Structure probing data (2A3) for a 207-nucleotide construct. It was measured as part of the RMDB library OK3TST.
RNA sequence: GGGAACGACUCGAGUAGAGUCGAAAAAACAUUGGUAGUGCUGAGCAGCAGCUUUCCUUGUGGCCUAACCUGGGAGGCCACGAGCAUUGGUUAAAAUGUCACCUGGGCUCUGACAAGCCCUUAACCAUGGGUGAGGAUACAGCCUGUGCUGCCUGCACCCAGCAUACUACUUCGGUAGUAUGCUGGGAAAAGAAACAACAACAACAAC
Reactivity to 2A3 in 0.01 (KOAc 150mM, MgCl2 10mM, bicine 150mM(pH8.5), 24C), signal-to-noise 1, nucleotides 027 to 156: a000a000c120a090u080u060g120g020u140a110g010u000g010c030u040g050a040g110c030a010g000c000a000g030c020u120u100u070c000c000u000u030g010u000g000g000c000c000u030a100a100c060c090u060g050g090g000a030g000g000c020c020a000c040g000a000g000c010a040u030u050g050g110u110u130a090a130a020a000u130g020u020c010a030c070c030u030g020g000g000c010u020c090u210g030a060c010a020a000g000c040c000c000u000u120a090a120c060c000a050u060g010g000g000u090g000a010g000g000a040u030a130c100a000g030c010c020u140g020u090g030c000u000g000c000c000u000g000c000a020